[RMDB]
RNA sequence: GGGAACGACUCGAGUAGAGUCGAAAAAUGCUGUGGGCGGCAUAGCGUAAUAGCCGACCAUCACGGGGAUCUUGUCAGGUCGGCAGGUAUAGCCAGCACGGGCCGAAAGUAGGCGCUUGGAAGAACUCUUUUGAAGAGUAUUCGUACUCUUCAAAAGAAAAGAAACAACAACAACAAC
Reactivity to DMS in 0.01 (KOAc 150mM, MgCl2 10mM, bicine 150mM(pH8.5), 24C), signal-to-noise 4, nucleotides 027 to 126: a050u020g000c050u030g020u000g000g000g020c030g000g000c040a060u020a060g010c050g000u000a060a080u020a130g010c010c000g000a030c010c000a120u020c120a040c070g000g030g010g020a090u020c050u010u010g000u010c170a150g030g000u010c020g010g010c020a010g000g010u010a100u030a090g010c020c010a070g000c040a070c110g000g010g010c030c020g000a060a050a100g010u010a090g010g000c090g000c040u010u000g000g000a070a070g000a080a100c130u010
Reactivity to 2A3 in 0.01 (KOAc 150mM, MgCl2 10mM, bicine 150mM(pH8.5), 24C), signal-to-noise 4, nucleotides 027 to 126: a000u090g000c030u040g000u080g040g030g060c040g010g020c040a060u050a040g070c030g040u100a070a070u050a170g000c000c000g010a030c000c000a040u070c010a020c050g050g000g010g040a060u060c010u090u160g040u070c060a040g020g020u000c000g000g000c010a000g020g010u070a030u060a090g040c020c010a010g000c030a030c030g030g010g010c010c020g080a120a040a020g060u070a060g070g000c040g010c050u020u090g030g020a040a020g010a090a050c020u000